[RMDB]
The data come from the RNA Mapping Database (RMDB), library ARCHII.
This 207-nucleotide RNA was probed chemically with DMS and 2A3.
The 2A3 profile rests on 1,292 reads.
The RNA was probed in 150 mM KOAc, 10 mM MgCl2 and 150 mM bicine (pH 8.5) at 24 C.
RNA sequence: GGGAACGACUCGAGUAGAGUCGAAAAAGGUUAGUUAUAUUGAAGAGCCUUGAGCUAUGGCAGACAAUAUAAUGAACUACAAAUAAUAGCCCUAUAAACGUAGAUAUUGGUGUAUCGGGCGAUUUGGACAGGGGUUCGACUCCCCUCAGAUCCAUUUAAAUAAGGUUAUGUUCGCAUAACCUUAUUUAAAAGAAACAACAACAACAAC
Reactivity to DMS in 0.01 (KOAc 150mM, MgCl2 10mM, bicine 150mM(pH8.5), 24C), signal-to-noise 3, nucleotides 027 to 156: a100g000g000u000u010a070g010u000u000a020u000a020u000u000g010a060a240g000a300g000c010c010u010u010g020a230g020c140u010a080u000g020g040c000a110g010a300c010a020a020u000a000u000a010a030u000g000a040a050c020u000a100c040a100a070a140u000a090a090u010a090g040c000c000c010u000a110u000a030a040a090c050g010u000a080g010a290u000a150u000u000g040g040u000g010u010a040u000c110g010g000g050c030g010a070u010u000u000g000g010a080c060a090g000g020g040g010u000u000c090g020a300c110u000c000c000c010c000u040c020a050g000a190u000c020c020a300u010u000u020
Reactivity to 2A3 in 0.01 (KOAc 150mM, MgCl2 10mM, bicine 150mM(pH8.5), 24C), signal-to-noise 2, nucleotides 027 to 156: a000g070g000u050u070a030g000u020u000a030u010a020u030u030g060a180a080g060a050g130c020c010u100u140g060a060g020c100u160a050u140g020g000c030a020g020a150c010a010a000u010a000u010a000a000u040g010a010a000c010u100a050c130a030a090a010u180a050a040u070a100g000c000c000c030u010a030u040a040a150a000c010g050u080a030g070a180u120a120u260u300g080g020u070g050u020a040u050c020g000g010g000c010g070a070u120u060u140g000g010a010c010a010g010g010g000g000u000u010c020g020a000c020u020c000c010c020c000u000c010a020g000a010u020c000c000a000u010u020u000